[RMDB]
RNA sequence: GGGAACGACUCGAGUAGAGUCGAAAAAAAUUGAAAUGACCAGGGCUGGAGAGAUGACUCAGCAGUUAAGAGCACUGGCUGCUUUCCCAAAGGUCAUGAGUUCAAUUUCCAGCAAUCACAUGGUGGACAGUAAAUGGCAUUUCGAUGCCAUUUACUGAAAAGAAACAACAACAACAAC
Reactivity to DMS in 0.01 (KOAc 150mM, MgCl2 10mM, bicine 150mM(pH8.5), 24C), signal-to-noise 2, nucleotides 027 to 126: a000a050a110u020u020g000a100a070a110u000g010a030c020c020a100g000g020g030c080u000g020g020a080g020a020g000a150u010g010a070c030u020c030a020g010c020a040g010u000u010a050a090g020a120g010c110a070c090u000g010g000c030u000g000c030u000u010u000c000c000c000a110a100a120g010g000u010c050a080u000g010a050g010u000u000c030a020a060u010u000u000c000c000a030g000c030a070a050u000c150a070c100a110u010g010g020u000g010g010a190